[RMDB]
RNA sequence: GGGAACGACUCGAGUAGAGUCGAAAAGGAUGCUCGUUCGCGAGCAUCCACUGAGAUAGCCACUAUAAAGAUUAAGUCUUCCUACUCGAGACAGGUUGUCUAUGCUCCUGGCCUUCGGGCCAGGAAACAGAAUCCUUAUAUUCGUAUAAGGAUUCUGAAAAGAAACAACAACAACAAC
Reactivity to DMS in 0.01 (KOAc 150mM, MgCl2 10mM, bicine 150mM(pH8.5), 24C), signal-to-noise 4, nucleotides 027 to 126: g020g000a000u000g010c010u000c000g040u010u020c230g020c010g000a020g010c010a010u000c000c000a030c110u010g000a180g010a040u000a070g010c070c120a080c160u000a100u000a100a040a060g000a090u000u000a090a140g000u000c010u010u000c040c010u010a010c010u000c010g010a020g000a070c150a090g000g000u000u000g000u000c030u000a120u010g000c110u000c000c010u000g000g010c000c000u000u010c220g030g020g030c000c000a000g000g000a000a020a110
Reactivity to 2A3 in 0.01 (KOAc 150mM, MgCl2 10mM, bicine 150mM(pH8.5), 24C), signal-to-noise 3, nucleotides 027 to 126: g010g000a000u000g000c000u010c000g030u030u080c280g010c020g100a000g000c000a000u010c000c000a000c000u040g000a030g010a030u070a040g080c100c050a080c060u130a100u120a270a160a020g070a070u120u160a090a060g080u000c010u020u000c000c000u010a020c000u000c010g030a030g060a090c070a020g150g000u030u030g110u110c040u050a130u130g060c010u020c010c000u000g020g000c020c000u020u050c180g070g000g000c000c000a000g000g000a000a000a000
The record gives the reactivity of an RNA of 177 nucleotides to DMS and 2A3. DMS adducts were read by reverse transcription with MarathonRT. Conditions: 150 mM KOAc, 10 mM MgCl2 and 150 mM bicine (pH 8.5), 24 C.